[RMDB]
RNA sequence: GGGAACGACUCGAGUAGAGUCGAAAAUGCUUUAUCGUUUAUUGCGCACACUGACACAGGCAUAAACGUAUAUUGCCCACAUAAUUUAACAAACAUUUCAUUUAUAUGCGCAUUGGCCUGCGAUUGACCCAGUGGGUGGUUUCGACCACCCACUGGGAAAAGAAACAACAACAACAAC
Reactivity to 2A3 in 0.01 (KOAc 150mM, MgCl2 10mM, bicine 150mM(pH8.5), 24C), signal-to-noise 2, nucleotides 027 to 126: u060g000c000u010u020u020a000u080c010g000u000u000u000a070u040u230g010c020g000c000a060c000a060c250u070g040a010c080a000c070a020g040g000c000a000u080a000a000a000c000g040u000a060u000a000u020u020g180c000c020c020a070c010a070u220a180a080u050u300u240a030a000c080a300a030a000c000a010u000u100u300c100a050u060u080u180a290u040a040u220g000c000g000c000a000u110u000g000g000c030c000u040g000c050g300a290u000u010g000a010
Structure probing data (2A3) for a 177-nucleotide construct. 2A3 adducts were read by reverse transcription with SuperScript II with manganese.